Conditions: 150 mM KOAc, 10 mM MgCl2 and 150 mM bicine (pH 8.5), 24 C. This 177-nucleotide RNA was probed chemically with DMS and 2A3.
RNA sequence: GGGAACGACUCGAGUAGAGUCGAAAAUUAAAGAUACUUGCGUUCAGUCAACAGGUCGAGCGUUGAAGCGGUCGCAGAGCCGUGAGCCGUCGCAACCAAUGAGAGCGCCCCGCAGCGAUCCUGGGGGGACAACAACCUUUUUCGAAAGGUUGUUGUCAAAAGAAACAACAACAACAAC
Reactivity to DMS in 0.01 (KOAc 150mM, MgCl2 10mM, bicine 150mM(pH8.5), 24C), signal-to-noise 4, nucleotides 027 to 126: u010u050a070a070a090g000a130u030a040c070u010u010g030c020g000u000u010c070a070g030u020c060a070a060c090a160g000g030u000c010g000a160g000c010g010u000u040g000a070a230g030c010g010g020u000c050g010c170a100g000a180g000c020c020g000u020g010a150g010c010c010g010u020c040g010c180a090a050c020c020a080a070u030g000a080g000a070g000c040g000c010c010c000c000g000c040a040g000c120g000a100u010c040c020u000g000g020g000g000g000
Reactivity to 2A3 in 0.01 (KOAc 150mM, MgCl2 10mM, bicine 150mM(pH8.5), 24C), signal-to-noise 6, nucleotides 027 to 126: u120u070a090a030a010g090a070u100a090c040u020u050g010c020g010u010u020c020a100g060u030c020a100a080c010a220g020g060u040c020g020a050g060c020g000u040u120g020a030a000g010c010g010g020u050c080g010c300a060g040a040g060c010c010g000u020g010a020g040c000c000g010u020c000g000c030a020a020c010c010a040a060u080g010a030g010a010g050c020g000c000c000c000c010g120c000a010g000c020g050a030u020c010c000u020g010g020g010g010g030

Overview:
Reactivities are given for positions 27 through 126.